[RMDB]
RNA sequence: GGGAACGACUCGAGUAGAGUCGAAAACCUCAAGAGUUCGCUCUUGAGGAAAAUACCGCCCGAAAAGCUUGCUGACCGGGCGGAAAAAUAAAACAGCUAGCAAAACGGAAAGGUUCGCCUUUCCGAAGUUUUAUUGUAACUUCGGUUACAAUAAAACAAAAGAAACAACAACAACAAC
Reactivity to DMS in 0.01 (KOAc 150mM, MgCl2 10mM, bicine 150mM(pH8.5), 24C), signal-to-noise 2, nucleotides 027 to 126: c000c000u000c000a040a030g000a010g040u000u040c290g010c010u000c000u010u010g000a000g010g010a020a030a060a110u000a160c080c000g020c030c030c020g010a140a090a210a140g010c030u000u000g010c030u010g030a190c160c020g000g000g020c010g000g000a000a000a060a090a030u010a090a050a100a090c100a020g000c060u010a050g020c020a090a080a120a160c010g000g000a000a000a020g020g030u000u000c220g040c000c010u000u000u000c000c000g030a010a040
Reactivity to 2A3 in 0.01 (KOAc 150mM, MgCl2 10mM, bicine 150mM(pH8.5), 24C), signal-to-noise 1, nucleotides 027 to 126: c000c000u010c000a000a000g000a000g030u050u070c130g040c050u000c000u000u000g000a000g000g000a120a000a020a000u050a010c000c000g020c000c000c000g010a000a040a050a040g000c010u030u030g000c000u020g020a040c060c020g000g000g000c000g000g000a030a020a000a000a020u070a010a010a000a010c030a000g030c030u060a000g000c010a010a040a050a090c020g000g020a000a000a010g040g030u040u080c160g100c010c000u000u000u010c000c000g000a010a000
The data come from the RNA Mapping Database (RMDB), library M2PK50. An RNA of 177 nucleotides, treated with DMS and 2A3 and read out base by base.